[RMDB]
This 207-nucleotide RNA was probed chemically with DMS and 2A3. Conditions: 150 mM KOAc, 10 mM MgCl2 and 150 mM bicine (pH 8.5), 24 C. For DMS the reverse transcriptase was MarathonRT.
RNA sequence: GGGAACGACUCGAGUAGAGUCGAAAAUGUGGGUAACACUGCAUGCUGGGAACGGAAAUGAGCACUGUGUGCCCAGCAGGGCUCAGACUGCCAUGUGGGGUCCCUGGAGAAGAAAUCACGCUAACACUGAGUAUCAAAAGGAUGAGUGGUCCUGGGAUCAUACUGACCGGUUCGCCGGUCAGUAUGAAAAAGAAACAACAACAACAAC
Reactivity to DMS in 0.01 (KOAc 150mM, MgCl2 10mM, bicine 150mM(pH8.5), 24C), signal-to-noise 1, nucleotides 027 to 156: u000g010u000g050g020g010u000a190a130c110a150c100u000g000c010a100u000g050c000u000g000g000g000a100a160c040g020g000a050a140a160u010g000a030g010c010a100c000u000g000u000g000u000g040c000c000c000a300g000c000a070g020g010g040c010u020c010a130g030a170c000u000g030c000c040a060u000g000u020g010g080g060g030u000c030c030c000u000g000g000a130g040a130a080g000a060a060a100u000c040a020c000g010c010u010a050a020c020a070c050u010g000a090g010u010a100u020c090a100a120a070a050g040g000a090u010g000a060g050u000g000g060u000c010c000u030g010g010g050a160
Reactivity to 2A3 in 0.01 (KOAc 150mM, MgCl2 10mM, bicine 150mM(pH8.5), 24C), signal-to-noise 2, nucleotides 027 to 156: u110g010u060g010g020g000u030a000a020c030a020c070u060g000c010a030u070g020c010u060g030g040g030a140a080c060g040g080a020a100a110u060g000a010g010c000a010c040u020g020u010g050u070g140c010c000c000a010g000c000a000g000g020g000c000u010c010a000g040a050c040u060g070c070c010a090u110g050u070g020g000g000g000u020c000c000c020u010g080g010a070g020a010a090g020a010a070a000u090c030a030c050g050c080u030a040a010c030a020c090u050g030a000g050u050a040u190c040a010a090a020a040g030g000a020u080g010a040g040u020g010g060u000c010c000u010g000g000g000a010